[RMDB]
This 177-nucleotide RNA was probed chemically with DMS and 2A3. DMS adducts were read by reverse transcription with MarathonRT.
RNA sequence: GGGAACGACUCGAGUAGAGUCGAAAACUGGAAGGUUAAGAGGACCGGUUAGCCAGUAAUGGCGAAGCUGAGAAUUUAAGCCCCAGUAAACGGCGGUGGUAACUAUAACCAUCCUAAGGUAGCGAAAACGCUAUGGGAUUUUCGAAUCCCAUAGCGUAAAAGAAACAACAACAACAAC
Reactivity to DMS in 0.01 (KOAc 150mM, MgCl2 10mM, bicine 150mM(pH8.5), 24C), signal-to-noise 3, nucleotides 027 to 126: c010u020g000g000a160a060g020g000u000u000a100a080g020a000g000g040a300c110c000g000g010u000u010a300g020c000c000a000g000u030a130a100u010g000g000c000g010a090a120g010c020u030g000a030g000a300a130u000u020u050a120a170g000c000c010c000c000a000g000u000a060a100a080c150g000g040c120g000g020u010g000g000u000a020a110c230u020a120u010a080a040c000c020a050u000c010c030u010a110a120g020g000u020a080g020c100g040a100a030a140
Reactivity to 2A3 in 0.01 (KOAc 150mM, MgCl2 10mM, bicine 150mM(pH8.5), 24C), signal-to-noise 3, nucleotides 027 to 126: c010u000g040g050a240a110g080g020u130u060a120a100g090a050g040g020a000c000c000g020g000u260u000a010g000c010c010a010g020u140a120a160u090g000g000c000g000a010a010g000c020u010g020a000g000a040a020u010u000u000a060a000g010c000c000c000c000a030g000u040a040a010a030c060g030g020c060g010g010u040g040g030u040a050a080c070u070a050u100a140a000c010c010a010u070c000c000u080a140a050g050g000u100a030g030c060g070a000a000a010